[RMDB]
Chemical mapping of a 177-nucleotide RNA with DMS and 2A3. Source: RMDB library TTRDEL, as collected in RNAgym. Reactivities are given for positions 27 through 126. For DMS the reverse transcriptase was MarathonRT. The reactions ran in a buffer of 150 mM KOAc, 10 mM MgCl2 and 150 mM bicine (pH 8.5), at 24 C.

RNA sequence: GGGAACGACUCGAGUAGAGUCGAAAAGAUAUGGAAUAAGCACAGGGUACGAAGAACUCGGAAACGAGGGAGUACAUUGUGCGUAUAUUCCUAAGUCAAAACUGAUUAUGGUUCGCCAUAAUCAGAACAACGAGAAAGACUUCGGUCUUUCUCGUUGAAAAGAAACAACAACAACAAC
Reactivity to DMS in 0.01 (KOAc 150mM, MgCl2 10mM, bicine 150mM(pH8.5), 24C), signal-to-noise 2, nucleotides 027 to 126: g000a070u010a300u030g000g000a040a030u000a060a170g000c000a030c000a000g000g000g030u000a000c010g020a170a180g010a080a250c020u000c000g000g000a060a090a230c010g000a020g000g000g000a060g030u000a000c000a010u000u000g010u000g000c000g000u000a060u000a030u000u000c020c000u000a090a130g000u000c040a070a060a070a130c000u010g000a010u030u000a000u000g000g030u000u010c250g000c000c000a000u000a000a000u000c000a000g000a070a140
Reactivity to 2A3 in 0.01 (KOAc 150mM, MgCl2 10mM, bicine 150mM(pH8.5), 24C), signal-to-noise 1, nucleotides 027 to 126: g050a010u050a050u200g020g020a000a000u050a070a030g010c000a000c000a010g010g020g010u000a010c000g120a300a070g000a090a050c030u000c010g040g050a070a060a040c040g000a010g030g010g010a020g030u030a000c020a050u040u020g020u010g000c000g010u000a030u010a000u160u050c010c010u030a070a070g070u070c050a000a030a140a240c010u010g010a010u010u000a000u020g020g000u040u060c180g030c050c000a000u000a000a000u010c000a000g000a010a000